[RMDB]
RNA sequence: GGGAACGACUCGAGUAGAGUCGAAAAAUAAAAGGCUGACAAAAUCCGAUGUCUACCUCCUCGUGGUGUCAGCCGGAUUGUGCUGUAUCAGUACUGCAUAUAUUAACAGACAUGGAAAUAAAAAAAACUAAGCAUGUAGUUUCGACUACAUGCUUAGAAAAGAAACAACAACAACAAC
Reactivity to 2A3 in 0.01 (KOAc 150mM, MgCl2 10mM, bicine 150mM(pH8.5), 24C), signal-to-noise 1, nucleotides 027 to 126: a000u100a000a110a000a040g010g030c010u000g000a000c020a020a060a030a290u060c030c000g010a000u020g000u000c000u010a060c010c000u020c030c010u170c060g090u090g060g000u000g010u010c000a000g000c010c020g000g010a010u010u020g010u000g000c010u030g010u010a030u140c060a120g230u010a010c000u010g000c010a010u070a000u000a010u090u070a030a020c020a010g010a000c000a010u030g000g080a030a040a020u150a050a040a010a000a010a000a000a010
Reactivity to DMS in 0.01 (KOAc 150mM, MgCl2 10mM, bicine 150mM(pH8.5), 24C), signal-to-noise 1, nucleotides 027 to 126: a120u020a060a090a110a060g010g000c010u000g000a000c000a140a050a070a090u000c030c000g010a020u000g000u000c000u000a030c010c000u000c020c000u020c080g040u000g000g020u000g010u000c000a000g030c010c010g000g000a020u000u010g030u000g000c020u000g000u000a020u010c230a210g040u000a010c000u000g000c000a020u010a020u000a030u000u000a030a030c070a020g000a010c000a000u000g000g030a050a200a100u020a000a010a000a040a060a110a030a190
An RNA of 177 nucleotides, treated with 2A3 and DMS and read out base by base.
The RNA was probed in 150 mM KOAc, 10 mM MgCl2 and 150 mM bicine (pH 8.5) at 24 C.